[RMDB]
RNA sequence: GGGAACGACUCGAGUAGAGUCGAAAAGAAAUAAAAGGUAGAGAGAGCUCUGUCGCCGGAAAAUAAUAAGACAGAGUGGCCCGGUUUAUCUCUCAAAACCGGAUUGCUAAGACGGCGAAUUAGAAAAGGGAAUAAGUAUCUUCGGAUACUUAUUCCCAAAAGAAACAACAACAACAAC
Reactivity to DMS in 0.01 (KOAc 150mM, MgCl2 10mM, bicine 150mM(pH8.5), 24C), signal-to-noise 2, nucleotides 027 to 126: g000a070a170a080u040a050a090a050a050g010g030u020a050g000a180g010a060g060a070g020c030u000c030u010g020u000c000g010c090c030g010g010a180a070a090a110u020a060a050u030a140a060g010a080c020a000g000a040g000u000g000g000c080c000c000g020g020u030u040u010a040u000c040u010c020u010c020a090a020a060a040c000c000g000g000a080u030u020g010c030u000a060a090g030a130c130g000g000c070g010a090a070u030u030a060g000a040a080a130a050
Reactivity to 2A3 in 0.01 (KOAc 150mM, MgCl2 10mM, bicine 150mM(pH8.5), 24C), signal-to-noise 2, nucleotides 027 to 126: g030a000a080a090u300a070a100a010a010g180g030u130a000g030a020g000a010g000a000g060c000u030c000u000g000u000c010g000c050c000g100g120a000a040a000a300u300a040a060u280a250a040g000a000c000a000g000a000g000u000g000g000c000c000c000g000g000u000u030u000a020u000c030u000c040u000c030a090a090a000a000c000c000g000g010a010u070u090g000c000u030a110a050g060a040c000g020g000c010g020a080a190u140u050a140g060a040a040a050a050

Conditions: 150 mM KOAc, 10 mM MgCl2 and 150 mM bicine (pH 8.5), 24 C. The record gives the reactivity of an RNA of 177 nucleotides to DMS and 2A3. For 2A3, 927 sequencing reads were counted. For 2A3 the reverse transcriptase was SuperScript II with manganese. DMS (dimethyl sulfate) methylates the pairing face of unpaired adenines and cytosines.